Record summary:
Structure probing data (DMS and 2A3) for a 177-nucleotide construct. It was measured as part of the RMDB library OK2TRN. For 2A3, 1,823 sequencing reads were counted. Conditions: 150 mM KOAc, 10 mM MgCl2 and 150 mM bicine (pH 8.5), 24 C. Values cover nucleotides 27 to 126. 2A3 adducts were read by reverse transcription with SuperScript II with manganese. As a SHAPE reagent, 2A3 marks flexible, mostly unpaired nucleotides at the ribose 2'-OH.
[RMDB]
RNA sequence: GGGAACGACUCGAGUAGAGUCGAAAAUGUCCAUGGAGAACGAGGCCGCCCGCCUCUACCAGGAGGAGAAGGGCAUGGCGGACGAUGAGGCGAGGCAGCGCGACGCCCUGUACGAGCGCGCAGAACGCUCGGUGGUACAUUUCGAUGUACCACCGAGAAAAGAAACAACAACAACAAC
Reactivity to DMS in 0.01 (KOAc 150mM, MgCl2 10mM, bicine 150mM(pH8.5), 24C), signal-to-noise 3, nucleotides 027 to 126: u010g020u010c030c040a130u000g000g010a100g010a100a070c120g010a110g000g020c060c060g010c020c050c070g000c030c000u010c000u010a050c200c230a120g000g000a050g000g000a060g010a070a140g010g000g000c030a030u000g000g010c040g030g000a070c060g000a080u030g000a120g010g010c040g000a070g020g020c090a080g000c010g000c020g010a100c030g000c030c010c040u000g010u020a080c110g020a080g000c000g030c020g010c070a070g000a060a110c150g010
Reactivity to 2A3 in 0.01 (KOAc 150mM, MgCl2 10mM, bicine 150mM(pH8.5), 24C), signal-to-noise 1, nucleotides 027 to 126: u130g050u020c020c000a010u090g030g050a220g020a130a050c040g000a040g040g030c040c030g010c000c010c020g040c000c010u020c010u010a060c020c050a030g010g020a020g040g000a070g020a140a180g000g000g040c040a030u070g020g000c020g000g020a030c030g070a060u100g010a010g030g070c030g020a050g020g030c030a010g000c020g050c000g040a000c020g000c030c070c000u030g050u100a020c060g010a050g120c020g000c020g000c010a030g040a140a010c020g000